[RMDB]
RNA sequence: GGGAACGACUCGAGUAGAGUCGAAAAUCACAACAUCGUAGUAAGCCACAUACUUGCGGCCCUCUAAGCCAUCGUCACCACCAAGCAAUACUACGGCGAUUGCCAGCGCGGUACCGGCCGACGCACCGGUUAGAGCCAUAUUCGUAUGGCUCUAACCAAAAGAAACAACAACAACAAC
Reactivity to 2A3 in 0.01 (KOAc 150mM, MgCl2 10mM, bicine 150mM(pH8.5), 24C), signal-to-noise 3, nucleotides 027 to 126: u080c010a000c030a100a060c010a110u070c040g120u040a050g050u040a100a020g040c040c000a040c010a060u090a070c040u070u080g050c060g030g040c030c010c000u050c030u020a090a040g010c020c010a040u050c050g050u020c030a010c070c000a030c000c010a080a010g020c000a080a080u030a150c030u040a060c050g030g000c040g130a150u020u150g000c000c010a050g000c030g010c010g050g000u030a130c000c000g040g020c000c020g090a080c010g000c020a040c030c040
Reactivity to DMS in 0.01 (KOAc 150mM, MgCl2 10mM, bicine 150mM(pH8.5), 24C), signal-to-noise 3, nucleotides 027 to 126: u010c050a100c080a080a090c090a050u010c050g030u010a050g040u000a030a140g000c020c040a070c110a030u010a050c130u000u010g030c050g000g020c020c020c050u000c070u000a090a090g030c040c070a090u000c050g010u010c000a060c020c020a060c080c050a040a060g000c060a050a060u010a070c060u010a050c090g000g010c070g020a090u000u000g000c030c050a100g000c040g020c040g000g030u000a090c080c100g010g010c030c000g000a070c070g000c030a070c110c050